[RMDB]
About this RNA:
The record gives the reactivity of an RNA of 177 nucleotides to DMS. Reactivities are given for positions 27 through 126. It was measured as part of the RMDB library TTRINS. The reactions ran in a buffer of 150 mM KOAc, 10 mM MgCl2 and 150 mM bicine (pH 8.5), at 24 C.
RNA sequence: GGGAACGACUCGAGUAGAGUCGAAAAGAUAUGGAUAUUAGCAAGGCAGGCAAGUAGACCCAGCCUCUAUUCGGAAACGAAUAGCCCGGCUGCUACUUGCCUGCUGAUGACCUAAUAUCCUAAGUCAUCAGAGGUAUGUCUUCGGACAUACCUCUGAAAAAGAAACAACAACAACAAC
Reactivity to DMS in 0.01 (KOAc 150mM, MgCl2 10mM, bicine 150mM(pH8.5), 24C), signal-to-noise 1, nucleotides 027 to 126: g000a100u010a300u010g000g000a110u000a010u000u050a000g040c030a090a040g000g000c010a010g000g000c010a000a000g000u000a000g000a300c270c300c090a000g000c000c010u080c000u000a010u000u000c000g000g000a100a070a210c000g000a040a000u010a010g000c300c220c300g000g020c000u050g050c000u000a000c000u000u000g010c000c000u000g000c000u010g000a030u010g000a120c300c000u000a030a000u000a070u000c000c000u000a000a030g000u000c030a100